[RMDB]
Overview:
Chemical mapping of a 207-nucleotide RNA with 2A3 and DMS. The reactions ran in a buffer of 150 mM KOAc, 10 mM MgCl2 and 150 mM bicine (pH 8.5), at 24 C. For DMS, 9,053 sequencing reads were counted.
RNA sequence: GGGAACGACUCGAGUAGAGUCGAAAAGGUCUCACUUUAAGUGGGCUACACUAAAUAAUCUCCGUCUGGGGUUAGUUAGAAGAGCUUAAUCAGACUAGCUGAAUGGAAGCCUGUUACCGGGCUGAUGUUUAUGCGAAAUACUAAUACGGUGACUACGGUAUGCAUAGAAGUUCGCUUCUAUGCAUACAAAAGAAACAACAACAACAAC
Reactivity to 2A3 in 0.01 (KOAc 150mM, MgCl2 10mM, bicine 150mM(pH8.5), 24C), signal-to-noise 8, nucleotides 027 to 156: g060g030u080c050u080c060a030c020u150u190u210a240a040g000u010g000g010g000c010u060a020c030a010c030u030a020a020a040u020a010a020u010c020u010c030c060g010u010c010u010g000g010g000g010u010u010a010g000u020u010a020g030a190a020g020a090g070c080u180u260a020a020u110c000a000g000a010c000u010a000g000c000u010g010a010a010u030g000g030a020a000g000c000c010u020g000u010u010a000c000c000g000g000g000c000u000g000a010u020g010u000u020u020a150u290g000c010g020a000a010a020u300a060c280u300a020a000u010a000c010g010g000u000g010a000c000u010a020c000g030
Reactivity to DMS in 0.01 (KOAc 150mM, MgCl2 10mM, bicine 150mM(pH8.5), 24C), signal-to-noise 3, nucleotides 027 to 156: g020g020u000c000u000c000a040c020u000u000u000a040a060g010u000g000g000g010c010u000a040c020a100c000u000a010a020a030u000a020a020u010c000u010c040c130g010u000c030u000g020g000g030g020u000u000a010g000u000u000a010g010a140a070g010a100g020c140u000u010a040a050u000c000a020g020a050c000u010a080g040c000u000g010a020a030u010g010g020a300a210g020c010c000u000g010u000u000a010c050c000g030g010g040c010u000g000a300u000g020u000u000u000a020u020g040c000g000a170a020a130u000a090c180u000a020a040u000a030c010g000g010u000g010a040c010u000a130c060g030
Annotation
Source: RMDB library ARCHII, as collected in RNAgym. For 2A3, 10,639 sequencing reads were counted. 2A3 adducts were read by reverse transcription with SuperScript II with manganese.